[RMDB]
RNA sequence: GGGAACGACUCGAGUAGAGUCGAAAAGAUAUGGAUCCCAUCCUUCGUUGAAAUACUAGUCGGAAACGACUAGGUAUGGAGAAGGUGGGAUCCUAAGUCAAAAGAAGUGUUGUUCGCAACACUUCAACAUCGCAUUACUGUUCGCAGUAAUGCGAUGAAAAGAAACAACAACAACAAC
Reactivity to DMS in 0.01 (KOAc 150mM, MgCl2 10mM, bicine 150mM(pH8.5), 24C), signal-to-noise 2, nucleotides 027 to 126: g000a010u000a040u030g010g000a010u000c000c000c000a010u030c030c020u010u000c010g030u010u020g000a150a150a010u010a030c010u010a010g000u000c010g010g010a000a010a030c000g000a040c000u000a010g010g010u020a010u000g000g000a040g000a020a010g030g040u000g010g010g010a000u010c000c000u000a000a040g000u010c010a140a080a130a150g000a020a010g010u000g010u000u000g000u000u000c300g020c000a020a010c000a010c000u000u000c000a090a210
Reactivity to 2A3 in 0.01 (KOAc 150mM, MgCl2 10mM, bicine 150mM(pH8.5), 24C), signal-to-noise 3, nucleotides 027 to 126: g010a000u010a010u040g000g010a010u030c000c020c000a100u300c070c050u010u020c010g230u200u300g200a010a010a030u000a010c000u000a000g010u000c000g000g000a000a020a000c000g000a000c000u020a010g000g000u040a010u020g180g100a270g010a050a020g000g000u020g000g000g010a000u020c000c000u000a010a000g010u000c010a030a010a000a200g020a010a010g000u010g020u040u030g040u090u220c300g030c130a020a010c000a000c000u010u010c000a000a010